An RNA of 177 nucleotides, treated with DMS and 2A3 and read out base by base. For 2A3, 9,771 sequencing reads were counted. Source: RMDB library TTRDEL, as collected in RNAgym. For 2A3 the reverse transcriptase was SuperScript II with manganese.
RNA sequence: GGGAACGACUCGAGUAGAGUCGAAAAGAUAUGGAGCAGUCAGCGACUCCGACGAUCUCGGAAACGAGGGAGGAGGCUGAGCUGCUCCUAAGUCAAACCUCUGUGUCAGUUCGCUGACACAGAGGAACCAACUGUGUUGGUUCGCCAACACAGUUGGAAAAGAAACAACAACAACAAC
Reactivity to DMS in 0.01 (KOAc 150mM, MgCl2 10mM, bicine 150mM(pH8.5), 24C), signal-to-noise 4, nucleotides 027 to 126: g010a060u010a300u010g000g010a010g020c010a000g020u000c010a010g000c020g010a280c010u000c010c010g010a090c300g000a010u000c000u000c000g000g000a120a120a200c010g000a020g010g000g000a010g020g010a030g010g000c000u000g010a080g010c000u000g000c000u000c000c000u010a010a050g010u000c030a110a140a160c010c000u000c000u020g000u000g000u010c010a010g010u010u010c210g020c000u000g010a020c000a000c010a010g000a000g000g020a010a080
Reactivity to 2A3 in 0.01 (KOAc 150mM, MgCl2 10mM, bicine 150mM(pH8.5), 24C), signal-to-noise 3, nucleotides 027 to 126: g000a010u080a040u200g000g000a000g010c000a000g010u040c000a010g000c090g300a270c030u030c000c000g110a170c020g000a030u000c000u000c000g060g020a120a090a050c010g000a010g010g000g000a010g010g000a010g020g030c010u020g000a050g020c000u000g000c000u010c000c010u000a010a010g000u000c020a060a050a130c010c000u000c000u020g000u010g000u010c010a020g020u030u190c290g050c170u010g000a000c000a000c000a000g000a000g010g000a000a010

The RNA was probed in 150 mM KOAc, 10 mM MgCl2 and 150 mM bicine (pH 8.5) at 24 C.